[RMDB]
RNA sequence: GGGAACGACUCGAGUAGAGUCGAAAACCAGCGUCCCUGCUAUGGAUCGUAGGAGCCGACCCCCUGGUCGUUGCCUGUGAUCCAUGCAGGUUCCUAGCUGAAAGGUCAUGAACUUCGGUUCAUGACCCCCUAAUCAUCCGUUCGCGGAUGAUUAGGGAAAAGAAACAACAACAACAAC
Reactivity to DMS in 0.01 (KOAc 150mM, MgCl2 10mM, bicine 150mM(pH8.5), 24C), signal-to-noise 3, nucleotides 027 to 126: c110c010a050g020c060g000u010c110c010c000u010g000c000u020a030u000g000g000a010u000c010g030u000a020g010g000a060g000c300c000g000a050c010c000c190c240c260u010g020g020u000c000g000u000u010g010c010c010u010g010u000g000a000u000c010c000a000u000g000c000a000g020g010u000u000c030c070u010a190g000c020u000g000a130a120a100g010g010u000c000a000u000g000a020a010c000u000u020c180g030g000u000u000c000a000u000g010a000c000c000
Reactivity to 2A3 in 0.01 (KOAc 150mM, MgCl2 10mM, bicine 150mM(pH8.5), 24C), signal-to-noise 3, nucleotides 027 to 126: c040c000a010g020c020g050u040c000c000c000u010g000c060u170a010u030g000g000a010u000c000g010u020a010g010g010a000g080c050c020g010a000c020c020c010c030c060u070g020g010u000c010g010u030u090g090c000c000u010g000u010g000a010u000c000c000a000u000g000c000a010g010g010u000u020c020c010u050a040g000c020u050g050a260a110a040g030g000u000c000a010u010g000a010a000c010u050u090c300g090g000u010u000c010a000u000g000a000c010c000
Chemical mapping of a 177-nucleotide RNA with DMS and 2A3. Values cover nucleotides 27 to 126. The DMS profile rests on 2,963 reads. Conditions: 150 mM KOAc, 10 mM MgCl2 and 150 mM bicine (pH 8.5), 24 C. The 2A3 profile rests on 5,329 reads. For DMS the reverse transcriptase was MarathonRT.